[RMDB]
RNA sequence: GGGAACGACUCGAGUAGAGUCGAAAAAAAAAGAUAUGGAAUGCAACAGCUGAUGCAUGCGAGGGAGUUCGGAAACGAACUCCUCCCCACCGCAUGAACUACAUCCGAAUCAUUCCUAAGUCAAAAACAUAUGAAGUAACUUCGGUUACUUCAUAUGAAAAGAAACAACAACAACAAC
Reactivity to 2A3 in 0.01 (KOAc 150mM, MgCl2 10mM, bicine 150mM(pH8.5), 24C), signal-to-noise 3, nucleotides 027 to 126: a000a030a000a030a030g020a010u030a010u040g010g010a000a010u010g010c140a240a110c030a300g080c200u250g000a000u010g030c000a000u010g000c000g000a010g000g020g000a000g000u000u000c000g020g010a000a010a010c010g010a000a000c000u000c000c000u030c000c000c000c000a020c000c010g000c000a000u010g010a020a010c060u260a040c080a020u000c010c030g060a080a060u140c010a000u000u000c000c000u010a020a010g020u000c020a040a020a050a020a080
Reactivity to DMS in 0.01 (KOAc 150mM, MgCl2 10mM, bicine 150mM(pH8.5), 24C), signal-to-noise 6, nucleotides 027 to 126: a050a030a050a080a100g000a000u000a060u010g000g000a010a000u010g010c200a190a150c190a090g030c260u010g010a020u010g000c000a010u000g010c010g000a160g000g000g000a010g020u000u000c000g000g000a020a020a020c000g010a010a000c000u000c010c000u000c090c010c000c010a300c040c010g000c000a010u010g000a030a010c080u010a250c010a010u000c020c100g000a200a240u010c010a010u000u000c010c000u000a000a070g000u030c030a090a080a070a100a160